[RMDB]
RNA sequence: GGGAACGACUCGAGUAGAGUCGAAAAAACGCACAAAAUAGAAAUUUAAGAUGCUAUGUCUCAGUUUCGUAAUCUAUUUAGUAUAAGGCGAUAUGGCCUUCGUCAGGAACGGGAACAUGUCCGUCCGCAACGUGCUCAGCCGCUAUCUGUACAGAUCGUAGCGAGGUAUUUUCGAAUACCUCGCUACAAAAGAAACAACAACAACAAC
Reactivity to 2A3 in 0.01 (KOAc 150mM, MgCl2 10mM, bicine 150mM(pH8.5), 24C), signal-to-noise 1, nucleotides 027 to 156: a000a000c150g010c070a120c040a020a080a010a000u070a030g080a050a090a040u210u230u000a030a190g030a060u020g050c050u070a090u250g050u010c000u030c080a050g020u000u020u020c000g010u040a070a070u050c040u130a060u090u160u130a050g050u010a090u000a080a030g020g020c030g000a070u040a050u250g040g010c000c000u020u000c010g080u100c010a030g040g000a140a000c000g040g080g000a200a030c040a130u080g070u040c010c010g010u000c000c000g020c000a020a040c030g040u050g030c000u040c120a050g020c000c000g080c010u040a050u050c010u000g000u040a020c000a040g000a030u040c070